Overview: The record gives the reactivity of an RNA of 177 nucleotides to DMS and 2A3. The reactions ran in a buffer of 150 mM KOAc, 10 mM MgCl2 and 150 mM bicine (pH 8.5), at 24 C. For DMS, 2,373 sequencing reads were counted. The data come from the RNA Mapping Database (RMDB), library 15KREP.
RNA sequence: GGGAACGACUCGAGUAGAGUCGAAAAUACCAUAGUUGACAUUCCACAGAGUUUGACUUUUUCAUAUGAUGGGUUACGUGGCGCAAUACGUAAAGCUAAAGAUUAUGGUUUUACUGUUUUUGUGUGCGAUAGUUUCUUUCUUCGGAAAGAAACUAUCAAAAGAAACAACAACAACAAC
Reactivity to DMS in 0.01 (KOAc 150mM, MgCl2 10mM, bicine 150mM(pH8.5), 24C), signal-to-noise 3, nucleotides 027 to 126: u030a150c020c000a080u020a090g010u000u000g020a080c060a130u000u010c020c020a070c060a130g000a130g000u000u010u000g030a080c130u000u000u010u000u000c040a140u020a070u000g010a090u000g000g000g010u000u000a060c120g010u000g020g030c030g010c020a010a010u000a020c070g010u000a010a010a010g010c000u000a060a110a160g010a150u010u010a070u000g000g000u000u000u000u000a000c010u010g000u000u000u010u000u000g040u000g010u000g020c280
Reactivity to 2A3 in 0.01 (KOAc 150mM, MgCl2 10mM, bicine 150mM(pH8.5), 24C), signal-to-noise 1, nucleotides 027 to 126: u070a010c010c010a040u090a020g080u030u080g030a040c030a100u020u110c020c000a020c020a060g100a060g090u070u070u080g000a020c010u120u110u120u060u050c060a100u110a060u300g050a040u070g030g030g000u050u050a050c070g020u010g010g000c000g000c030a050a000u010a020c000g010u000a000a030a000g000c000u020a070a120a100g220a110u140u170a070u280g000g000u000u010u000u030a030c060u040g020u020u020u000u040u070g020u010g000u010g010c000